[RMDB]
RNA sequence: GGGAACGACUCGAGUAGAGUCGAAAAACUGAGAUAACCACAUGCCGGCAUAUUAGUCUGCGGAAUCCAUUGACGUUGAACCAUGGAUAGUCAGUCGCGCAUGAGGUUAAGGAUUAUUUCCGAACCAACAAGUAAUAGUAUUCGUACUAUUACUUGUAAAAGAAACAACAACAACAAC
Reactivity to 2A3 in 0.01 (KOAc 150mM, MgCl2 10mM, bicine 150mM(pH8.5), 24C), signal-to-noise 9, nucleotides 027 to 126: a000c040u050g010a050g010a080u040a020a000c000c000a010c000a010u010g000c010c010g030g000c040a020u060a070u210u110a090g150u020c040u050g020c040g060g050a060a050u000c020c010a040u050u140g120a090c110g060u050u140g040a060a030c010c000a010u020g010g000a010u020a020g060u090c060a010g000u010c000g000c030g000c040a000u010g010a020g020g000u010u010a010a000g000g000a020u030u020a050u030u130u000c000c010g000a030a030c030c010a010
Reactivity to DMS in 0.01 (KOAc 150mM, MgCl2 10mM, bicine 150mM(pH8.5), 24C), signal-to-noise 9, nucleotides 027 to 126: a080c170u000g000a300g000a070u000a010a010c010c000a110c010a010u000g010c000c010g010g010c010a090u000a070u010u000a070g020u000c040u000g010c080g010g010a100a060u000c020c020a050u010u000g020a080c150g010u010u000g000a100a120c060c020a020u000g000g000a020u000a030g010u010c110a100g020u000c010g010c170g000c010a010u000g010a030g010g000u000u000a010a030g010g000a160u000u000a080u000u000u000c000c010g010a090a120c190c130a100